[RMDB]
RNA sequence: GGGAACGACUCGAGUAGAGUCGAAAAUGCAAUUAGCGGCCCAGAUGGGCGGUGUCGCGCCACAAAUCGCCACUGUAGCCGCCUACGCCGGAAUGCGGAGUAUGGACCUUGUCGGCGGGGACGAAGUGUUAGCCGCUUUCCAUAAGAUACUUGUCGCGCCCUCAUGGUAUUUCGAUACCAUGAGGGCAAAAGAAACAACAACAACAAC
Reactivity to 2A3 in 0.01 (KOAc 150mM, MgCl2 10mM, bicine 150mM(pH8.5), 24C), signal-to-noise 1, nucleotides 027 to 156: u200g020c030a000a090u030u000a080g090c000g000g020c000c000c000a090g060a150u130g120g000g040c000g010g000u050g000u060c020g000c000g050c120c080a040c100a060a100a000u040c000g040c080c000a210c010u010g070u200a040g000c000c030g020c080c000u190a140c050g040c000c000g090g000a060a060u180g000c000g030g020a000g020u050a090u070g040g030a070c000c000u030u040g000u000c030g000g040c170g000g000g000g020a000c100g030a060a010g090u040g050u250u120a150g030c000c050g050c000u000u060u000c060c030a230u090a200a160g140a100u040a260c050u210u220g130u300c060g000c040

Chemical mapping of a 207-nucleotide RNA with 2A3.
Values cover nucleotides 27 to 156.
The reactions ran in a buffer of 150 mM KOAc, 10 mM MgCl2 and 150 mM bicine (pH 8.5), at 24 C.
For 2A3 the reverse transcriptase was SuperScript II with manganese.